[RMDB]
Conditions: 150 mM KOAc, 10 mM MgCl2 and 150 mM bicine (pH 8.5), 24 C.
This 207-nucleotide RNA was probed chemically with 2A3.
The 2A3 profile rests on 1,656 reads.
The data come from the RNA Mapping Database (RMDB), library M2RFPK.
RNA sequence: GGGAACGACUCGAGUAGAGUCGAAAAACUUUGAUGGCGGUACUAUGAAUUGAUGCAAGGUGUGGAGCGACCUUAAACAGUUCUGGUGGUGCUCUGAGUGGAGUGCUCUACUGAGAUUAUAAAAUAGCAUGCAUAGAGUGCUUCGGCACUCUAUGAACAUAACCGGGGUGUUCGCACCCCGGUUAUGAAAAGAAACAACAACAACAAC
Reactivity to 2A3 in 0.01 (KOAc 150mM, MgCl2 10mM, bicine 150mM(pH8.5), 24C), signal-to-noise 3, nucleotides 027 to 156: a000c050u100u070u110g050a060u100g030g000c020g010g070u060a050c050u050a080u190g050a060a050u070u050g040a060u120g110c060a020a030g040g000u020g020u070g030g020a030g030c030g020a020c000c000u030u080a070a110a020c010a040g010u040u020c010u020g000g050u040g000g070u040g000c000u010c020u060g050a030g000u050g000g020a040g010u040g010c010u000c010u030a020c040u020g040a030g010a060u100u090a100u220a130a080a090a020u160a040g040c100a050u110g020c010a000u010a000g000a000g010u000g010c010u000u030c140g030g000c000a000c000u000c010u000a000u000g010a000a000